This 170-nucleotide RNA was probed chemically with 2A3 and DMS. It was measured as part of the RMDB library 15KLIB. DMS adducts were read by reverse transcription with MarathonRT. Conditions: 150 mM KOAc, 10 mM MgCl2 and 150 mM bicine (pH 8.5), 24 C. For 2A3 the reverse transcriptase was SuperScript II with manganese. For DMS, 3,795 sequencing reads were counted. For 2A3, 1,731 sequencing reads were counted.
RNA sequence: GGGAACGACUCGAGUAGAGUCGAAAAAUAUGUGCACAGGUAGUCCUUCUAUAGUUGAAUUUAAUAGGUUGGCUACCUGUGACUGGACUGAAAGUGGUGAUUACACCCUUGCCAAUACUACAACAGAGAACGCCCAGCUUCGGCUGGGCGAAAAGAAACAACAACAACAAC
Reactivity to 2A3 in 0.01 (KOAc 150mM, MgCl2 10mM, bicine 150mM(pH8.5), 24C), signal-to-noise 2, nucleotides 027 to 129: a000u080a040u070g060u000g070c020a000c000a000g000g000u000a000g140u250c000c000u000u090c020u000a050u000a010g100u010u180g090a040a080u000u000u110a150a000u010a000g230g010u030u000g000g040c000u000a000c000c000u000g000u030g040a000c000u000g000g000a000c000u090g050a020a000a000g220u210g090g000u010g010a030u180u270a010c050a000c060c000c040u000u030g140c010c000a000a070u010a060c050u000a000c070a300a000c000a060g140a000g070a010a000
Reactivity to DMS in 0.01 (KOAc 150mM, MgCl2 10mM, bicine 150mM(pH8.5), 24C), signal-to-noise 3, nucleotides 027 to 129: a000u100a000u050g000u000g000c010a000c000a000g000g070u030a000g000u000c000c020u000u000c010u060a000u030a190g030u030u070g060a300a100u000u020u110a050a080u010a000g040g040u090u000g000g000c000u020a040c000c110u000g000u020g000a060c000u010g040g040a090c090u020g020a100a020a040g020u050g000g040u020g020a110u110u030a130c090a110c000c050c030u100u060g040c080c020a050a120u030a040c140u040a110c170a030a100c130a040g000a120g000a030a120